An RNA of 207 nucleotides, treated with 2A3 and read out base by base.
[RMDB]
RNA sequence: GGGAACGACUCGAGUAGAGUCGAAAAGAAAGAAAGAAAGAAAGGUAUGAAGUCCUAUUCACUCGGGAUAGGAUAAACUUCAUAUUGAUCGUGUAUGUGCUAACGCACAUACACGAAUGCGCAUGCAGAACUGCAUGCAUGAACAUAUUGAGUGCAAGCUCAGCUGGAUAUUCGUAUCCAGCUGAGCAAAAGAAACAACAACAACAAC
Reactivity to 2A3 in 0.01 (KOAc 150mM, MgCl2 10mM, bicine 150mM(pH8.5), 24C), signal-to-noise 1, nucleotides 027 to 156: g050a000a080a030g050a070a060a010g090a150a050a000g100a020a060a000g070g000u100a000u000g000a000a000g000u030c000c000u000a060u010u000c130a140c160u070c040g000g000g000a000u000a000g000g040a030u100a040a140a020c000u000u000c000a010u010a000u010u190g060a040u010c000g000u000g000u000a000u050g030u000g050c160u180a130a040c140g000c000a000c000a000u000a010c000a000c000g000a010a010u010g000c080g020c010a000u000g000c030a000g040a300a060c090u030g020c040a010u010g020c010a000u050g040a080a000c130a000u140a090u100u210g000a010g040u010g090c120a190a070
2A3 adducts were read by reverse transcription with SuperScript II with manganese. The RNA was probed in 150 mM KOAc, 10 mM MgCl2 and 150 mM bicine (pH 8.5) at 24 C.